RNA sequence: GGGAACGACUCGAGUAGAGUCGAAAAUACCCGCAUCGAGCUAGCAAGAGCAUGUAGGAAGCUAGCAACCUUCAUGCCGAUGCAAUCCCAGGCUAAUGCCAACGACUCUACUCGAGUCGACAUAGAAUAGUAGAGAACUAUUCGUAGUUCUCUACUAAAAAGAAACAACAACAACAAC
Reactivity to 2A3 in 0.01 (KOAc 150mM, MgCl2 10mM, bicine 150mM(pH8.5), 24C), signal-to-noise 2, nucleotides 027 to 126: u090a020c030c000c040g000c010a040u070c090g110a030g020c020u080a010g020c040a010a000g000a000g020c020a010u020g010u000a000g010g030a140a010g070c080u120a060g070c070a020a050c010c000u030u030c000a000u000g010c000c000g040a010u030g000c010a020a160u150c030c040c010a010g010g010c000u020a030a050u080g000c010c020a040a040c000g010a010c000u000c000u000a010c000u000c000g010a000g000u000c000g000a000c000a010u140a020g120a110a080
Reactivity to DMS in 0.01 (KOAc 150mM, MgCl2 10mM, bicine 150mM(pH8.5), 24C), signal-to-noise 2, nucleotides 027 to 126: u000a080c100c090c120g000c020a010u000c040g020a030g000c010u000a070g000c020a020a040g000a160g000c010a010u010g000u010a020g010g000a060a200g030c040u010a040g010c030a050a060c010c000u000u010c000a010u000g010c000c000g000a290u000g000c030a050a040u000c020c010c030a140g010g000c000u000a050a050u000g000c000c030a040a120c020g000a010c000u000c000u000a030c020u000c000g020a000g010u000c000g000a000c050a050u020a080g010a070a130